Annotation: This 177-nucleotide RNA was probed chemically with 2A3 and DMS. The RNA was probed in 150 mM KOAc, 10 mM MgCl2 and 150 mM bicine (pH 8.5) at 24 C. For 2A3, 2,818 sequencing reads were counted. It was measured as part of the RMDB libraries RFM100 and RFMREP.
RNA sequence: GGGAACGACUCGAGUAGAGUCGAAAAAGAGGCAACUCUUAACUGGCCAGAUAAGAAAAGACCGAGAGGUUCAAGCUUAUAGGGCAGAAAGCGGGGGACAGCAGUACUAAACAUUCCCUGUGGCUGAUGCUCAAUCCUUAUUCGUAAGGAUUGAGCAAAAAGAAACAACAACAACAAC
Reactivity to 2A3 in 0.01 (KOAc 150mM, MgCl2 10mM, bicine 150mM(pH8.5), 24C), signal-to-noise 3, nucleotides 027 to 126: a000g090a010g010g020c040a030a070c010u000c010u040u020a040a040c020u030g020g010c000c000a030g010a070u030a020a000g040a010a130a010a000g050a010c000c000g050a040g000a040g080g010u030u070c050a050a000g000c000u000u010a000u030a030g030g010g010c000a000g050a010a050a010g020c020g000g010g010g010g010a020c010a010g060c010a010g070u090a070c030u090a040a100a000c010a040u010u030c000c010c000u040g040u050g040g000c040u020g020a060
Reactivity to DMS in 0.01 (KOAc 150mM, MgCl2 10mM, bicine 150mM(pH8.5), 24C), signal-to-noise 5, nucleotides 027 to 126: a050g020a090g020g000c120a090a160c010u010c010u000u000a090a100c060u010g000g000c000c000a050g010a030u000a010a020g010a040a050a140a280g000a020c010c020g000a220g020a260g010g000u010u000c110a170a230g000c010u020u000a020u000a030g020g000g000c020a020g000a100a050a050g010c300g010g010g000g000g000a100c100a040g020c010a070g000u000a120c080u010a060a070a080c130a160u000u000c010c000c020u010g020u000g010g000c030u000g000a240